[RMDB]
RNA sequence: GGGAACGACUCGAGUAGAGUCGAAAAGAACAUCAAAAUCGCUGACUUUGGCUUUUCGAACGAGUUCACACCCGGCUCAAAGCUGGACACGUUCUGCGGUAGCCCGCCAUAUGCGGCACCGGAGCUAGUACCAUCGGAUAUUCGUAUCCGAUGGUACAAAAGAAACAACAACAACAAC
Reactivity to DMS in 0.01 (KOAc 150mM, MgCl2 10mM, bicine 150mM(pH8.5), 24C), signal-to-noise 3, nucleotides 027 to 126: g010a070a100c080a070u000c060a020a060a110a070u010c060g020c140u010g000a070c040u000u000u000g000g000c030u000u000u000u000c070g020a050a070c030g010a070g030u000u000c100a110c290a170c070c020c010g020g000c030u000c170a050a060a100g000c070u000g010g010a050c110a100c050g010u000u000c020u000g010c000g030g000u010a100g030c140c020c010g000c010c230a110u000a070u020g010c030g020g000c050a040c010c000g000g000a060g010c150u000a110
Reactivity to 2A3 in 0.01 (KOAc 150mM, MgCl2 10mM, bicine 150mM(pH8.5), 24C), signal-to-noise 3, nucleotides 027 to 126: g010a050a040c040a090u110c040a040a070a070a110u100c110g080c240u110g030a050c020u100u090u120g030g020c000u030u010u030u050c030g020a060a060c030g000a020g030u130u090c020a010c000a010c060c020c000g050g020c030u070c100a170a160a020g010c030u040g030g010a020c030a000c130g060u070u010c030u070g050c000g010g010u010a050g020c030c100c010g000c010c020a220u240a060u300g020c030g000g000c000a000c010c010g010g020a020g040c030u050a030
Chemical mapping of a 177-nucleotide RNA with DMS and 2A3. The DMS profile rests on 1,815 reads. The reactions ran in a buffer of 150 mM KOAc, 10 mM MgCl2 and 150 mM bicine (pH 8.5), at 24 C. The 2A3 profile rests on 3,227 reads.